[RMDB]
An RNA of 177 nucleotides, treated with 2A3 and DMS and read out base by base. Source: RMDB library RFMREP, as collected in RNAgym. 2A3 adducts were read by reverse transcription with SuperScript II with manganese.
RNA sequence: GGGAACGACUCGAGUAGAGUCGAAAAUGUAAAUGCUUCCAAGAUAUGAGCGAAUGCUAUAGAAAUUGCAGGAAAGUCCAAAGGGCUGCGCGUCUCCUGUGGCUCAGUCUUAUUUCAUACCUGCAACCCUAUUGAGUAUGUUCGCAUACUCAAUAGGAAAAGAAACAACAACAACAAC
Reactivity to 2A3 in 0.01 (KOAc 150mM, MgCl2 10mM, bicine 150mM(pH8.5), 24C), signal-to-noise 5, nucleotides 027 to 126: u130g020u060a010a090a150u110g000c020u050u000c020c010a040a050g100a180u230a090u240g070a030g010c070g090a130a040u190g010c020u030a010u030a120g070a040a160a010u060u020g000c000a000g020g010a230a150a020g040u040c080c090a130a110a040g020g000g000c010u020g000c030g010c020g090u050c030u040c030c040u150g070u140g110g000c000u000c010a000g010u000c000u010u060a140u070u160u060c050a050u070a100c000c000u010g020c000a010a050c000
Reactivity to DMS in 0.01 (KOAc 150mM, MgCl2 10mM, bicine 150mM(pH8.5), 24C), signal-to-noise 4, nucleotides 027 to 126: u010g000u010a070a060a100u000g010c050u010u000c030c050a100a100g010a150u020a080u010g010a070g020c050g010a080a040u000g010c050u010a090u010a080g000a080a080a160u010u000g000c010a020g000g000a070a090a100g010u010c100c090a060a080a100g000g000g020c000u000g010c150g000c030g000u010c060u010c070c120u010g020u010g010g010c010u010c000a040g000u010c020u000u020a140u010u000u000c060a070u000a130c020c000u000g000c010a030a080c270